[RMDB]
RNA sequence: GGGAACGACUCGAGUAGAGUCGAAAAAGCCGUGAGGUCCUCUACGGAGGACCUCACGGCACUCAACAAACUUAUGAUGGGGUGCGCGCUUUUUUAUUGUACAAGAUAACGGAUUUGUAGACAUUAAAUCAAUAGUAGGAUUCGUCCUACUAUUGAUAAAAGAAACAACAACAACAAC
Reactivity to 2A3 in 0.01 (KOAc 150mM, MgCl2 10mM, bicine 150mM(pH8.5), 24C), signal-to-noise 1, nucleotides 027 to 126: a000g000c010c000g000u000g040a010g000g000u010c120c000u000c060u000a090c300g100g000a030g000g000a020c000c030u000c010a000c080g000g000c000a000c000u010c000a040a080c020a030a090a050c030u150u160a080u200g070a060u160g070g010g000g000u010g030c000g000c010g010c040u000u250u000u060u080u060a130u120u140g080u020a010c010a020a010g030a110u020a070a070c070g060g000a050u000u000u160g040u090a080g020a100c070a070u120u150a040a160
Reactivity to DMS in 0.01 (KOAc 150mM, MgCl2 10mM, bicine 150mM(pH8.5), 24C), signal-to-noise 1, nucleotides 027 to 126: a070g010c000c040g180u000g060a130g030g020u040c000c000u000c030u010a110c160g070g040a020g030g000a030c010c040u000c010a040c000g000g000c000a020c010u010c030a030a110c130a050a080a090c140u000u010a040u000g000a090u010g010g000g000g000u000g000c060g000c070g020c000u010u010u000u050u000u010a130u020u020g010u000a060c070a040a110g030a090u030a030a070c050g020g020a100u010u010u000g010u010a060g000a090c140a070u000u000a050a090